The data come from the RNA Mapping Database (RMDB), library M2RFPK.
Chemical mapping of a 207-nucleotide RNA with DMS and 2A3.
Values are in units of 0.01, from 0 to 300, in steps of 10.
Reactivities are given for positions 27 through 156.
For 2A3 the reverse transcriptase was SuperScript II with manganese.
The reactions ran in a buffer of 150 mM KOAc, 10 mM MgCl2 and 150 mM bicine (pH 8.5), at 24 C.
[RMDB]
RNA sequence: GGGAACGACUCGAGUAGAGUCGAAAAGUCUGUGCGUUUCCAUUUGAGUAUCCUGAAAACGGGCUUUUCGGCAUGGAACGUACAUAUUAAAUAGUAGGAGUGCAUAGUGGCCCGUAUAGCAGGCAUUGAGGCGAGGAUUGUUUCGACAAUCCUCGAAUCCUCAAGGACUAUUCGUAGUCCUUGAGGAAAAAGAAACAACAACAACAAC
Reactivity to DMS in 0.01 (KOAc 150mM, MgCl2 10mM, bicine 150mM(pH8.5), 24C), signal-to-noise 2, nucleotides 027 to 156: g020u000c030u010g010u000g000c020g020u000u000u010c010c020a120u010u000u010g020a140g030u000a090u000c000c000u000g010a060a080a160a090c080g000g010g020c050u010u010u000u030c020g000g000c050a070u010g000g000a050a100c010g020u000a100c010a090u000a060u000u000a080a080a200u000a120g010u000a080g010g010a160g030u000g000c000a090u000a100g010u000g000g010c010c000c040g000u000a080u000a150g030c000a050g030g010c020a110u000u010g000a130g020g000c010g000a020g020g010a030u000u000g000u000u000u010c250g020a100c000a020a020u000c010c010u010c010g010a030a060
Reactivity to 2A3 in 0.01 (KOAc 150mM, MgCl2 10mM, bicine 150mM(pH8.5), 24C), signal-to-noise 3, nucleotides 027 to 156: g060u030c070u050g060u020g080c030g030u020u100u040c060c040a110u140u080u070g060a060g040u110a080u140c000c020u020g070a070a090a020a030c050g000g000g020c050u110u050u090u110c050g030g000c040a000u030g030g070a090a030c010g020u010a010c000a010u040a020u000u180a060a090a080u160a020g040u010a000g010g100a060g010u020g020c030a030u100a170g070u050g100g010c010c000c000g020u010a010u060a040g020c010a000g050g020c030a030u010u130g050a040g050g050c040g000a000g000g000a000u000u000g030u000u100u010c080g030a020c010a000a000u000c000c000u000c000g000a000a010